The record gives the reactivity of an RNA of 207 nucleotides to 2A3. For 2A3, 572 sequencing reads were counted. Values cover nucleotides 27 to 156. It was measured as part of the RMDB library RNAMAK.
RNA sequence: GGGAACGACUCGAGUAGAGUCGAAAAUGAUUUCUUCGGAAAUCAAGCAUAGGGGUCUACGCGGUGGAGGGACAUGCUCUGAAGCCUCCACGGAGCAACAGCCUACCCACCCACGACGUAGACGGAGGCACCCGACUAAACCAUCUUCGGAUGGUAAUCCCCAUAUCCUGUUCGCAGGAUAUGGGGAAAAAGAAACAACAACAACAAC
Reactivity to 2A3 in 0.01 (KOAc 150mM, MgCl2 10mM, bicine 150mM(pH8.5), 24C), signal-to-noise 1, nucleotides 027 to 156: u010g000a000u000u050u000c020u030u100c160g070g050a000a020a000u010c010a020a000g010c030a080u080a150g210g000g060g020u060c000u000a010c020g020c030g040g000u160g010g110a300g080g010g040a050c030a040u060g010c000u000c000u000g050a020a000g000c010c000u000c010c010a000c150g010g010a000g210c000a040a150c040a150g220c020c030u160a180c100c000c020a160c040c010c000a000c060g190a040c110g100u000a000g020a030c000g010g000a010g000g000c010a020c020c000c010g120a030c030u180a000a000a300c020c000a000u060c000u220u050c200g000g000a010u000g010g030u020a000a000